[RMDB]
RNA sequence: GGGAACGACUCGAGUAGAGUCGAAAACGGCGACACCGACGCGCAGGACGUGGCGCUCGCCGACUACGUCGCGCGGAUGAAGCCCGAGCAAACGAAGAUCUACUACGUGACGGCCGAUACGUGGCAAAGUAUUUAAUUAGUUCGCUAAUUAAAUACUAAAAGAAACAACAACAACAAC
Reactivity to DMS in 0.01 (KOAc 150mM, MgCl2 10mM, bicine 150mM(pH8.5), 24C), signal-to-noise 9, nucleotides 027 to 126: c180g010g010c010g010a260c060a060c060c020g010a150c020g010c010g010c030a150g020g010a050c010g010u000g000g010c030g010c070u010c170g020c100c010g010a120c020u000a020c020g010u000c010g010c010g020c010g000g000a060u000g000a100a260g010c010c010c020g000a130g010c140a060a080a110c090g010a100a090g000a090u000c040u000a110c030u000a040c040g010u010g000a090c070g000g010c020c020g000a140u010a030c070g010u000g000g010c110a080a070
Reactivity to 2A3 in 0.01 (KOAc 150mM, MgCl2 10mM, bicine 150mM(pH8.5), 24C), signal-to-noise 9, nucleotides 027 to 126: c020g020g010c010g020a020c020a010c070c030g140a090c010g010c000g000c030a050g180g060a010c010g010u010g000g000c010g000c020u050c030g090c110c000g230a300c010u030a010c010g010u010c010g000c000g000c000g010g010a040u060g030a030a010g020c010c020c010g040a040g060c090a100a070a040c050g080a060a030g010a120u020c010u060a050c010u030a040c040g010u020g030a020c020g050g020c010c010g020a030u040a120c060g020u060g040g000c030a100a120